[RMDB]
RNA sequence: GGGAACGACUCGAGUAGAGUCGAAAAAGGAUGAUUGCAAAUCUUAAUAAAUAUUUAGAUGAAAACGUAAUACCUGAGCUAUAUUGUUCAGGAUAUCCUCUAAAGUGACGAUAUAGAAUAGCGAUUAGCCAACCGUAUAGUUCGCUAUACGGUUGGCAAAAGAAACAACAACAACAAC
Reactivity to 2A3 in 0.01 (KOAc 150mM, MgCl2 10mM, bicine 150mM(pH8.5), 24C), signal-to-noise 2, nucleotides 027 to 126: a000g070g000a010u050g000a050u050u000g000c000a030a110a130u000c010u060u200a000a000u030a000a090a190u300a100u090u000u060a040g000a090u000g000a010a030a000a170c070g050u020a020a000u020a060c000c000u000g000a000g000c010u030a020u010a100u300u300g000u090u000c000a000g000g020a000u000a000u000c000c000u010c030u040a050a060a080g090u030g060a060c160g000a050u010a060u040a230g070a040a000u010a090g020c000g050a040u000u070a020

Source: RMDB library OK1LIB, as collected in RNAgym. An RNA of 177 nucleotides, treated with 2A3 and read out base by base. 2A3 adducts were read by reverse transcription with SuperScript II with manganese. Conditions: 150 mM KOAc, 10 mM MgCl2 and 150 mM bicine (pH 8.5), 24 C. Reactivities are given for positions 27 through 126.